RNA sequence: GGGAACGACUCGAGUAGAGUCGAAAAACAGUGUCAUUGAGUACGCUGGUGGUCGUGAACGUUUUGAUGCACUGUAUAACCACCUUGAGACGCACAACCCUGAGGCUGCACAGUCGCUGGAUAAUGCGUUGACCAAUCGUGACUUAGCGACCGUUAAGGGAGUACGGUACUUCGGUACCGUACUCCCAAAAGAAACAACAACAACAAC
Reactivity to 2A3 in 0.01 (KOAc 150mM, MgCl2 10mM, bicine 150mM(pH8.5), 24C), signal-to-noise 1, nucleotides 027 to 156: a010c040a000g000u040g100u250c060a070u040u140g060a030g130u090a000c000g010c130u090g200g070u100g100g020u000c000g000u010g110a030a040c040g020u050u010u070u090g040a040u000g060c030a000c000u000g020u000a000u160a050a030c000c050a040c070c000u050u110g080a010g000a000c040g060c000a160c090a180a070c010c010c010u050g010a160g020g000c000u140g000c080a040c020a110g000u000c000g110c040u040g000g020a010u030a250a000u150g000c060g000u000u020g040a010c000c010a060a100u100c130g090u160g030a060c070u000u010a030g020c000g010a000c000c000g000u090u080a200a300